About this RNA:
This 177-nucleotide RNA was probed chemically with DMS and 2A3. For DMS, 1,028 sequencing reads were counted. The RNA was probed in 150 mM KOAc, 10 mM MgCl2 and 150 mM bicine (pH 8.5) at 24 C.
[RMDB]
RNA sequence: GGGAACGACUCGAGUAGAGUCGAAAAACUGCCGGUGCGAGCUGAUCGAGGGCAAGAACGCGACAGCUGAUCACGUGGUGUCCAAGGCUACGUGGAUCAGAGAGGGACGCGACGGCAGCCCCGAUCACCAGCCAAGAAGUUUCGACUUCUUGGCUGGAAAAGAAACAACAACAACAAC
Reactivity to DMS in 0.01 (KOAc 150mM, MgCl2 10mM, bicine 150mM(pH8.5), 24C), signal-to-noise 1, nucleotides 027 to 126: a080c050u000g010c000c000g030g000u000g030c020g000a060g050c060u000g010a000u000c030g030a200g060g020g020c020a060a110g020a230a070c010g020c000g000a070c010a130g010c000u000g020a020u000c010a030c000g010u000g000g040u000g010u040c190c230a050a090g000g000c000u000a010c000g010u000g000g000a000u000c020a040g010a100g000a160g010g020g000a120c010g000c000g000a060c050g020g010c160a120g000c000c000c000c040g000a040u000c100a060
Reactivity to 2A3 in 0.01 (KOAc 150mM, MgCl2 10mM, bicine 150mM(pH8.5), 24C), signal-to-noise 1, nucleotides 027 to 126: a000c000u020g000c000c000g040g000u070g040c040g010a020g010c010u020g050a130u050c000g000a300g010g080g000c030a070a060g090a120a010c040g000c000g040a030c010a040g010c010u000g010a000u010c000a000c000g000u000g000g000u060g080u120c120c030a160a050g280g010c020u010a000c000g040u030g060g120a020u000c010a010g020a000g030a050g040g040g080a010c000g050c000g050a110c010g050g020c020a020g020c010c040c000c000g000a030u070c000a010
It was measured as part of the RMDB library OK2TRN.